[RMDB]
RNA sequence: GGGAACGACUCGAGUAGAGUCGAAAAGCUUCUACCAGCAAGCUAGCAGUCACCAACAACCACAUUGUCGUGAUGGGUAACAGCUUUCUACCCAGCUUGUGGUACUGGGUGGUGGAGCGGAGUGCACCAGUCUCGAUCUGUUCGCAGAUCGAGACUGAAAAGAAACAACAACAACAAC
Reactivity to 2A3 in 0.01 (KOAc 150mM, MgCl2 10mM, bicine 150mM(pH8.5), 24C), signal-to-noise 2, nucleotides 027 to 126: g000c020u070u000c030u100a140c040c030a030g020c030a030a020g040c010u070a030g010c000a070g070u050c000a000c050c030a000a050c000a060a000c010c020a030c000a080u150u150g100u140c190g010u100g150a090u130g030g000g030u020a080a010c030a030g050c000u030u030u130c050u020a030c010c000c000a010g030c030u090u050g070u070g050g010u030a080c040u030g050g040g000u030g010g000u030g050g010a050g050c050g030g020a070g040u080g000c040a040c020
Reactivity to DMS in 0.01 (KOAc 150mM, MgCl2 10mM, bicine 150mM(pH8.5), 24C), signal-to-noise 3, nucleotides 027 to 126: g000c030u000u000c040u010a100c090c060a130g020c060a050a070g020c040u000a100g040c050a070g010u000c010a020c010c020a060a030c080a050a040c020c030a030c020a110u000u010g020u020c210g050u000g000a070u020g000g000g020u000a040a110c160a110g000c150u010u010u000c130u010a040c000c000c000a020g010c060u010u000g010u000g000g000u000a090c110u010g000g010g000u010g020g020u010g010g000a110g020c040g020g010a080g020u000g000c030a140c200